Background
The data come from the RNA Mapping Database (RMDB), library TTRDES. Chemical mapping of a 177-nucleotide RNA with DMS and 2A3. For 2A3, 4,894 sequencing reads were counted. The reactions ran in a buffer of 150 mM KOAc, 10 mM MgCl2 and 150 mM bicine (pH 8.5), at 24 C. The DMS profile rests on 2,485 reads.
RNA sequence: GGGAACGACUCGAGUAGAGUCGAAAAGAUAUGGAACCAUAAGGGAGUGCCAUUCGGAAACGAAUGAAGCACAUCGAUCUUAUUGGUUCCUAAGUCAAAGGGUGUAGUCGUUCGCGACUACACCCAACAGUACCAACUUCUUCGGAAGUUGGUACUGAAAAGAAACAACAACAACAAC
Reactivity to DMS in 0.01 (KOAc 150mM, MgCl2 10mM, bicine 150mM(pH8.5), 24C), signal-to-noise 2, nucleotides 027 to 126: g000a020u000a070u010g000g010a000a020c000c000a010u010a020a020g000g000g010a120g020u000g000c010c000a040u000u000c000g020g000a010a000a040c000g020a040a000u000g010a230a210g000c000a000c000a230u010c300g000a090u010c000u000u000a020u010u020g030g030u000u010c000c000u000a000a030g000u010c010a180a120a170g000g000g020u000g000u010a000g030u000c000g040u010u020c300g030c010g000a010c000u000a010c000a000c010c010c000a000a010
Reactivity to 2A3 in 0.01 (KOAc 150mM, MgCl2 10mM, bicine 150mM(pH8.5), 24C), signal-to-noise 3, nucleotides 027 to 126: g000a000u040a020u050g010g000a000a000c010c000a000u020a000a010g090g130g040a190g010u010g000c020c010a000u010u010c010g000g000a010a000a000c000g000a020a000u090g080a200a060g080c000a010c010a010u300c120g130a160u010c010u000u050a090u160u300g020g000u000u010c000c000u000a010a010g000u030c010a010a140a130g050g000g000u000g010u010a010g020u000c040g050u070u120c300g010c010g190a000c010u000a000c000a000c010c010c000a010a000